Structure probing data (2A3 and DMS) for a 177-nucleotide construct. For DMS, 1,447 sequencing reads were counted. The data come from the RNA Mapping Database (RMDB), library OK2TST. For DMS the reverse transcriptase was MarathonRT. The 2A3 profile rests on 975 reads.
[RMDB]
RNA sequence: GGGAACGACUCGAGUAGAGUCGAAAAUUGAGGCUUUACCCAACUCCUUGUUGAUGUCUUUGACAAACUUGUUGAAGCUCUGGAACAGGUGGAUGAACCGCCCCAAAAGGAUAUGGAACUCCCCCUGCAAAGAGGGAGGUUUCGACCUCCCUCUUUGAAAAGAAACAACAACAACAAC
Reactivity to 2A3 in 0.01 (KOAc 150mM, MgCl2 10mM, bicine 150mM(pH8.5), 24C), signal-to-noise 1, nucleotides 027 to 126: u030u050g020a000g030g020c020u080u090u140a120c000c000c000a000a060c020u000c000c030u040u060g030u080u030g060a040u040g110u070c020u050u020u080g040a030c030a060a260a130c060u130u050g000u000u060g010a020a000g030c000u000c030u060g090g000a070a060c040a030g000g000u020g020g000a040u090g020a100a080c000c000g040c030c010c000c000a000a010a050a040g030g010a030u090a100u300g000g040a000a020c010u010c000c000c040c030c000u010g000
Reactivity to DMS in 0.01 (KOAc 150mM, MgCl2 10mM, bicine 150mM(pH8.5), 24C), signal-to-noise 2, nucleotides 027 to 126: u010u010g030a050g020g000c100u010u010u000a110c000c020c020a170a130c020u010c020c100u000u000g030u020u010g010a060u000g020u010c010u000u000u000g000a040c050a060a190a130c180u000u000g010u010u000g010a020a070g010c060u000c040u010g020g010a100a120c080a040g020g030u010g000g010a110u020g010a060a200c060c010g000c050c000c020c040a010a070a080a090g010g010a040u000a090u000g000g020a070a120c060u000c030c000c010c010c010u020g020